Chemical mapping of a 177-nucleotide RNA with DMS and 2A3. For DMS, 1,307 sequencing reads were counted.
RNA sequence: GGGAACGACUCGAGUAGAGUCGAAAACAGGUUCGUGUGAAAGCUCGUCUUGAGGAGCGCGCCGAUGCCGAAGAGGGUGACGAAGAGGACCUCGACUACGAGUACGCGGUUGAGGAUGACCAGAACCGCUACGUGAUCGUUUCGACGAUCACGUAGCAAAAGAAACAACAACAACAAC
Reactivity to DMS in 0.01 (KOAc 150mM, MgCl2 10mM, bicine 150mM(pH8.5), 24C), signal-to-noise 2, nucleotides 027 to 126: c080a160g010g000u000u000c010g010u030g010u000g020a080a080a120g040c010u010c010g020u010c160u050u020g010a110g000g010a020g010c030g020c050g020c030c000g010a130u000g020c000c000g010a120a040g000a140g000g000g000u010g000a100c120g010a050a060g010a110g000g000a190c060c000u000c020g020a040c020u000a030c020g020a300g030u010a090c070g020c030g000g010u000u030g010a040g030g000a100u010g000a110c030c050a110g000a070a050c150c100
Reactivity to 2A3 in 0.01 (KOAc 150mM, MgCl2 10mM, bicine 150mM(pH8.5), 24C), signal-to-noise 1, nucleotides 027 to 126: c010a000g030g030u070u040c030g000u150g010u090g210a170a120a030g010c010u020c010g160u050c100u080u080g120a120g070g060a050g020c060g000c010g000c020c020g030a080u120g000c000c000g010a050a010g050a070g010g020g000u070g040a060c060g030a100a000g070a040g060g020a040c020c000u000c030g000a000c020u080a000c030g020a050g160u130a070c100g000c060g000g000u000u000g030a040g050g020a060u140g130a040c010c020a010g000a030a040c030c010